[RMDB]
RNA sequence: GGGAACGACUCGAGUAGAGUCGAAAAAACGUUGGCGGCAUGGCUAAAGCAUGCAAGUCGCACGUGCCCCGCAAGGGGAAAGUGGCGGACGGGUCAGUAACAGGAUCGAACGUACCCCGAGGUGGGGGUUGUACCCGCUAUUCGUAGCGGGUACAACAAAAGAAACAACAACAACAAC
Reactivity to DMS in 0.01 (KOAc 150mM, MgCl2 10mM, bicine 150mM(pH8.5), 24C), signal-to-noise 2, nucleotides 027 to 126: a070a020c040g000u000u000g010g010c020g010g000c000a040u020g000g000c050u000a090a090a210g010c030a080u020g000c020a060a140g040u000c010g000c030a050c000g000u000g010c010c000c000c000g000c270a070a160g010g000g030g010a020a020a090g000u010g000g000c010g020g000a020c010g020g010g010u030c030a040g010u030a090a080c150a220g000g000a050u000c020g070a090a100c020g030u010a160c010c000c000c030g010a170g000g030u030g000g000g010g000
Reactivity to 2A3 in 0.01 (KOAc 150mM, MgCl2 10mM, bicine 150mM(pH8.5), 24C), signal-to-noise 3, nucleotides 027 to 126: a000a000c030g040u020u030g120g000c010g000g010c020a000u050g050g000c080u180a120a020a040g080c030a000u040g000c000a060a050g030u050c030g010c030a010c000g050u090g150c000c000c010c000g010c040a030a040g000g010g050g000a040a070a010g060u070g130g230c010g020g020a030c040g000g000g030u030c020a020g030u130a130a040c020a040g010g100a030u050c010g030a030a030c000g010u150a050c000c000c000c020g060a090g000g160u120g010g010g010g010